RNA sequence: GGGAACGACUCGAGUAGAGUCGAAAAGAUGGUGCGGCUGUGAUAGCGUCGUUGCCAGCCAACGAACGAGCACAGGUUCUCGCGGAAAUGGACGAUGCAGAGCUUGCCGGAUUGCCGGCUGAUAUGCCAAUGGAAUCAGGUUCGCCUGAUUCCAUUGAAAAGAAACAACAACAACAAC
Reactivity to DMS in 0.01 (KOAc 150mM, MgCl2 10mM, bicine 150mM(pH8.5), 24C), signal-to-noise 8, nucleotides 027 to 126: g000a100u010g020g020u000g010c040g010g010c010u000g000u000g000a100u010a070g010c050g020u000c010g010u000u000g020c030c100a120g000c150c030a030a100c040g010a060a050c050g000a110g010c050a070c080a060g000g000u000u000c030u000c050g020c120g020g010a040a070a090u010g000g000a060c070g010a090u000g010c020a050g000a130g000c050u000u010g020c010c010g000g010a230u010u010g010c020c010g000g000c020u000g010a090u010a050u000g000c080
Reactivity to 2A3 in 0.01 (KOAc 150mM, MgCl2 10mM, bicine 150mM(pH8.5), 24C), signal-to-noise 6, nucleotides 027 to 126: g060a060u140g000g060u090g010c030g040g000c030u030g010u040g090a120u080a140g090c020g030u020c010g000u020u050g040c010c030a060g080c060c000a030a030c030g040a090a010c020g000a020g080c050a030c020a130g030g040u110u020c040u030c050g010c030g010g040a060a120a120u100g030g010a020c040g020a030u050g010c020a020g010a020g080c060u110u130g000c010c020g080g050a200u120u240g200c000c010g000g000c010u030g050a070u030a030u170g040c010